[RMDB]
RNA sequence: GGGAACGACUCGAGUAGAGUCGAAAAUGAUAAGGUGAAAUGCUCUGUGUCAGCCACGGUGACCUUAAAAGCUGGCAUUAUUGGUGCUGAGUCAUGUUUUAUUUUGAAGGGUCCAAUGGAGAAUCAGUACAGGCCAACUAUUCGUAGUUGGCCUGUAAAAAGAAACAACAACAACAAC
Reactivity to DMS in 0.01 (KOAc 150mM, MgCl2 10mM, bicine 150mM(pH8.5), 24C), signal-to-noise 1, nucleotides 027 to 126: u000g040a120u000a030a150g010g020u010g020a090a120a040u000g000c000u000c060u000g010u000g010u000c050a010g030c130c080a040c180g020g020u020g020a080c010c050u000u010a090a070a140a140g000c010u000g000g000c030a030u010u000a110u000u000g010g010u010g010c070u000g000a230g000u000c040a050u000g000u000u000u000u000a090u000u010u000u000g040a080a070g000g010g000u000c020c070a060a110u010g010g030a220g010a060a060u000c100a090g030
This 177-nucleotide RNA was probed chemically with DMS. High DMS reactivity at an A or C suggests that its Watson-Crick edge is free. Source: RMDB library OK2TRN, as collected in RNAgym. DMS adducts were read by reverse transcription with MarathonRT. The RNA was probed in 150 mM KOAc, 10 mM MgCl2 and 150 mM bicine (pH 8.5) at 24 C.